Source: RMDB library RFMREP, as collected in RNAgym. The record gives the reactivity of an RNA of 177 nucleotides to DMS and 2A3. The RNA was probed in 150 mM KOAc, 10 mM MgCl2 and 150 mM bicine (pH 8.5) at 24 C.

[RMDB]
RNA sequence: GGGAACGACUCGAGUAGAGUCGAAAAGUGCGCAAAGUACGCAAAAAAGCAGUCAAAAGCGCUUGGAGUGUGACGCACGGAAUCUGAGAGUGUUUCGGUAAAGGCCGAAACCUAAAAUUUAUCAAUAGUUAUAAAUGAACUUCGGUUCAUUUAUAACAAAAGAAACAACAACAACAAC
Reactivity to DMS in 0.01 (KOAc 150mM, MgCl2 10mM, bicine 150mM(pH8.5), 24C), signal-to-noise 2, nucleotides 027 to 126: g000u000g000c000g010c130a050a100a110g040u010a050c010g020c020a010a030a170a080a020a040g000c000a080g030u020c040a090a060a190a250g010c150g010c020u010u040g010g010a300g000u010g000u000g000a110c010g030c000a030c010g010g010a140a050u000c080u000g020a120g020a070g000u010g000u000u000u000c010g000g000u000a030a100a140g000g020c000c000g000a010a010a010c000c040u000a030a020a120a060u010u020u000a070u000c020a060a090u010a190
Reactivity to 2A3 in 0.01 (KOAc 150mM, MgCl2 10mM, bicine 150mM(pH8.5), 24C), signal-to-noise 1, nucleotides 027 to 126: g000u040g000c010g010c000a000a060a270g080u070a030c010g000c000a220a300a000a060a000a000g010c060a040g040u050c050a100a030a080a000g020c010g030c000u000u010g000g000a040g000u030g000u050g070a050c010g000c010a000c000g000g040a010a030u000c080u080g040a070g010a020g120u200g000u050u000u000c010g050g000u100a290a180a090g250g010c000c000g050a000a000a000c020c000u050a050a070a010a030u180u240u150a060u070c010a000a100u050a150